[RMDB]
Description
Chemical mapping of a 177-nucleotide RNA with DMS. The DMS profile rests on 1,266 reads. The RNA was probed in 150 mM KOAc, 10 mM MgCl2 and 150 mM bicine (pH 8.5) at 24 C. It was measured as part of the RMDB library OK2TST.
RNA sequence: GGGAACGACUCGAGUAGAGUCGAAAACGGGCGCGUCGGAGCCAAGCGCGAGGGGCACGCCUUGGGAUGCUAACAGCGCCAGCGGGUUGAGUUCGCUGCCUCGCUGGGCGCCCAGGCGGCGAGCGUACAUCGAGUUGCAGUUCGCUGCAACUCGAUGAAAAGAAACAACAACAACAAC
Reactivity to DMS in 0.01 (KOAc 150mM, MgCl2 10mM, bicine 150mM(pH8.5), 24C), signal-to-noise 1, nucleotides 027 to 126: c130g010g000g020c010g000c070g020u000c050g010g010a140g020c020c060a060a160g000c080g020c010g010a130g020g010g020g070c090a170c050g010c020c020u000u000g000g000g000a040u020g010c010u000a110a150c050a050g000c020g010c300c010a000g000c010g020g000g000u010u010g000a240g000u000u020c040g010c010u000g000c090c030u000c040g040c010u020g010g010g010c030g010c000c000c000a010g000g000c010g020g010c060g000a050g000c030g000u020a140